[RMDB]
The record gives the reactivity of an RNA of 177 nucleotides to 2A3. Source: RMDB library OK1LIB, as collected in RNAgym. 2A3 adducts were read by reverse transcription with SuperScript II with manganese. Reactivities are given for positions 27 through 126. Conditions: 150 mM KOAc, 10 mM MgCl2 and 150 mM bicine (pH 8.5), 24 C.
RNA sequence: GGGAACGACUCGAGUAGAGUCGAAAAUGGCCGUGUAGCGCGCGCCAGAUGUCGAGCUGCCACCAUUCCCAGCGCUGCCUCCGGCCGAGGAAGAGGACAGCUUGCUGCCGCUGCUCGCCUGCGAGUCCCCGACGUCGCUGUUCGCAGCGACGUCGGGAAAAGAAACAACAACAACAAC
Reactivity to 2A3 in 0.01 (KOAc 150mM, MgCl2 10mM, bicine 150mM(pH8.5), 24C), signal-to-noise 1, nucleotides 027 to 126: u040g000g050c150c030g090u060g060u070a030g070c030g000c000g010c030g070c120c040a090g070a160u120g180u270c020g030a000g050c000u000g020c020c060a120c050c010a050u010u000c000c000c000a050g050c000g060c070u140g000c000c000u040c000c000g020g000c000c050g000a160g030g040a030a060g070a000g040g080a000c000a000g070c050u000u030g010c000u010g040c030c000g010c000u000g000c030u030c000g020c000c030u030g030c000g040a070g100u120c060